About this RNA:
The data come from the RNA Mapping Database (RMDB), library RNAMAK. An RNA of 207 nucleotides, treated with DMS and 2A3 and read out base by base. The 2A3 profile rests on 3,061 reads.
RNA sequence: GGGAACGACUCGAGUAGAGUCGAAAAAGCAAGCUUCGGCUUGCUAGCCCCCGUAGGUCUGUCAUUCUCUUGGAUUUAUUAACGUACUUCGAAAGAGGUACGGGAGUUGUCAGAGAAUGCCAGACCUAAACGGACUGGAGAACUCUUCGGAGUUCAAUUGAAAUUGAUGAUUCGUCAUCAAUUUCAAAAAAGAAACAACAACAACAAC
Reactivity to DMS in 0.01 (KOAc 150mM, MgCl2 10mM, bicine 150mM(pH8.5), 24C), signal-to-noise 2, nucleotides 027 to 156: a090g020c010a010a000g030c000u010u000c300g050g000c000u010u000g020c020u010a030g020c030c010c010c020c000g000u000a040g030g020u010c000u000g000u000c010a000u000u000c000u000c010u000u000g040g000a050u000u010u000a020u000u010a150a210c000g010u010a000c010u000u000c010g010a160a140a300g000a000g020g020u000a000c000g010g000g050a110g010u000u000g010u010c030a070g000a040g020a020a020u000g000c060c000a010g000a000c000c000u010a000a010a060c030g000g020a150c050u000g010g000a300g000a010a020c000u000c000u000u010c290g030g010a040g020u000u010c020a050a170
Reactivity to 2A3 in 0.01 (KOAc 150mM, MgCl2 10mM, bicine 150mM(pH8.5), 24C), signal-to-noise 4, nucleotides 027 to 156: a010g030c030a030a000g000c030u100u270c300g120g010c000u000u100g010c000u000a000g000c020c000c000c010c020g020u020a010g000g000u000c000u000g010u010c000a000u010u000c000u000c020u090u250g190g010a090u300u300u090a060u070u200a050a010c010g000u000a000c000u010u000c010g080a140a100a090g000a010g000g020u010a000c050g000g010g000a010g010u060u050g010u030c010a000g000a000g000a010a000u010g000c000c010a010g000a000c000c000u000a000a000a000c000g000g020a040c100u180g050g050a120g010a060a000c000u000c000u060u100c300g070g000a010g000u020u020c010a010a020
The reactions ran in a buffer of 150 mM KOAc, 10 mM MgCl2 and 150 mM bicine (pH 8.5), at 24 C.